[RMDB]
RNA sequence: GGGAACGACUCGAGUAGAGUCGAAAAAGGGACAGUGACAAGAAAGAGGUCAAAGGUAGGCCAAGGGAAGGAGGGGGUGCUGGGAGACAGGGACGGAGUCUAGGGAUCAGUGUUCCAGGACUGGGCAGCACUAAUAAAUCUUCGGAUUUAUUAGUGCAAAAGAAACAACAACAACAAC
Reactivity to 2A3 in 0.01 (KOAc 150mM, MgCl2 10mM, bicine 150mM(pH8.5), 24C), signal-to-noise 1, nucleotides 027 to 126: a000g070g010g000a030c020a050g040u030g030a020c010a050a080g120a110a140a000g070a060g040g000u070c020a010a160a010g110g030u070a030g090g000c030c010a040a040g030g010g040a140a110g010g010a110g000g000g000g020g020u110g070c030u040g040g020g020a180g020a050c080a060g020g000g060a010c080g010g010a040g000u000c010u060a060g030g000g030a030u070c030a070g090u030g060u210u060c000c010a040g040g000a000c000u020g020g060g000c010a040
Reactivity to DMS in 0.01 (KOAc 150mM, MgCl2 10mM, bicine 150mM(pH8.5), 24C), signal-to-noise 2, nucleotides 027 to 126: a060g000g020g000a080c070a060g000u020g010a020c050a020a040g050a070a070a130g010a140g020g000u010c060a090a080a100g000g000u000a030g030g000c070c050a090a140g000g000g000a100a080g010g030a180g000g000g000g000g010u010g000c180u020g030g000g000a080g000a050c050a140g000g000g000a020c060g000g000a060g000u000c020u010a090g010g000g010a040u010c070a040g030u000g020u000u000c000c030a210g020g000a030c030u000g030g000g050c200a090